[RMDB]
RNA sequence: GGGAACGACUCGAGUAGAGUCGAAAAUGAUGAAAACAGAGGCUGGAUGCAGCGCAUCAGGCGAAGGCGGAGAAGACGGGCCGCAUUGUCCGGCCAUCUUUUAGACAUGGAAGACAAUGUGCCGCCGAUACUCCUCCUCCUUCGGGAGGAGGAGUAUAAAAGAAACAACAACAACAAC
Reactivity to 2A3 in 0.01 (KOAc 150mM, MgCl2 10mM, bicine 150mM(pH8.5), 24C), signal-to-noise 2, nucleotides 027 to 126: u160g040a040u090g010a000a060a010a000c070a060g020a010g050g040c010u080g040g000a020u110g020c010a030g080c060g000c060a020u100c020a000g040g020c040g000a010a030g000g000c000g090g030a060g000a080a050g090a040c050g000g000g000c050c000g000c020a030u000u010g020u000c010c000g210g060c010c000a000u020c030u000u290u140u190a060g010a050c070a030u000g000g000a010a030g020a020c000a010a000u040g020u000g070c050c020g030c010c000g010
Reactivity to DMS in 0.01 (KOAc 150mM, MgCl2 10mM, bicine 150mM(pH8.5), 24C), signal-to-noise 3, nucleotides 027 to 126: u000g000a070u000g010a000a110a120a140c140a060g000a050g010g010c000u000g050g030a090u000g040c060a070g010c160g010c050a080u010c040a090g000g000c000g000a120a090g010g030c020g000g010a120g000a030a010g030a130c070g020g000g040c140c060g000c010a000u010u000g000u010c040c000g010g000c000c010a010u020c020u000u030u010u040a070g000a090c250a070u000g000g010a300a080g000a000c030a040a000u050g010u010g030c050c010g030c020c040g000
Chemical mapping of a 177-nucleotide RNA with 2A3 and DMS. The RNA was probed in 150 mM KOAc, 10 mM MgCl2 and 150 mM bicine (pH 8.5) at 24 C.